Source: RMDB library M2PK50, as collected in RNAgym.
This 177-nucleotide RNA was probed chemically with DMS and 2A3.
The RNA was probed in 150 mM KOAc, 10 mM MgCl2 and 150 mM bicine (pH 8.5) at 24 C.
The DMS profile rests on 4,167 reads.
For DMS the reverse transcriptase was MarathonRT.
[RMDB]
RNA sequence: GGGAACGACUCGAGUAGAGUCGAAAAUCUCAAAGCUUCGGCUUUGAGACAGUAAGGGAAACCGAUUAUUCCGGUCGACUCCGGAGUAACAAAGUCAAAUAAGAACGUUAGGCUUCGGCCUAACGAAGUUACUAUAACCCUUCGGGGUUAUAGUAACAAAAGAAACAACAACAACAAC
Reactivity to DMS in 0.01 (KOAc 150mM, MgCl2 10mM, bicine 150mM(pH8.5), 24C), signal-to-noise 4, nucleotides 027 to 126: u000c000u000c000a010a010a020g020c000u000u000c240g040g010c010u000u000u000g000a000g000a010c090a070g010u010a060a060g010g010g000a090a090a220c030c020g000a140u000u000a110u010u000c010c000g000g000u000c030g000a060c030u010c000c000g000g000a030g010u000a010a140c130a010a020a020g000u010c020a090a060a120u010a110a100g010a110a190c010g000u000u000a010g000g010c000u000u020c190g040g000c000c000u000a000a000c000g000a010a050
Reactivity to 2A3 in 0.01 (KOAc 150mM, MgCl2 10mM, bicine 150mM(pH8.5), 24C), signal-to-noise 6, nucleotides 027 to 126: u020c010u000c000a010a000a000g000c020u080u190c240g120g000c000u000u010u010g000a000g000a000c000a020g110u100a060a150g040g030g020a080a030a020c010c010g000a020u050u050a190u230u010c000c030g010g010u020c050g040a010c100u030c250c000g000g020a030g050u020a000a000c020a040a030a020g060u110c080a010a060a120u160a120a060g100a160a030c000g000u000u000a000g000g000c010u030u050c230g070g000c000c000u000a000a000c000g000a010a000